[RMDB]
RNA sequence: GGGAACGACUCGAGUAGAGUCGAAAAGAAGUGUUGUUAGAUUAAUUUUGUGGGACAUUAACAACAGCAUCAGCAGCAACAUCAGCCUUAGUUAAUGAAUCCUGACAAGUUAAGUGACUUUAUUUAAAUUCCAUAGUAUUUUCGAAUACUAUGGAAUAAAAGAAACAACAACAACAAC
Reactivity to DMS in 0.01 (KOAc 150mM, MgCl2 10mM, bicine 150mM(pH8.5), 24C), signal-to-noise 6, nucleotides 027 to 126: g010a150a140g010u010g000u000u000g000u010u010a080g000a300u010u000a020a020u000u010u010u010g030u010g000g010g000a060c060a020u000u000a010a000c020a040a100c300a150g000c060a060u020c060a070g000c080a080g000c070a060a060c140a070u020c100a110g000c020c040u000u010a180g010u000u010a010a010u010g000a070a140u000c010c000u000g000a040c030a020a020g000u000u000a010a050g010u010g000a170c040u000u000u000a090u040u020u020a060a060
Reactivity to 2A3 in 0.01 (KOAc 150mM, MgCl2 10mM, bicine 150mM(pH8.5), 24C), signal-to-noise 6, nucleotides 027 to 126: g090a080a010g040u020g000u040u020g000u020u070a060g020a210u020u050a030a020u100u260u090u090g020u020g010g000g000a000c000a000u010u010a010a010c030a010a010c000a040g030c010a040u120c030a020g130c010a010g030c030a040a100c010a220u140c080a040g020c000c000u060u090a010g000u000u010a010a010u010g060a040a060u010c000c000u030g040a020c010a010a000g010u010u020a050a010g050u050g130a040c000u020u080u050a160u040u150u030a140a220
Structure probing data (DMS and 2A3) for a 177-nucleotide construct.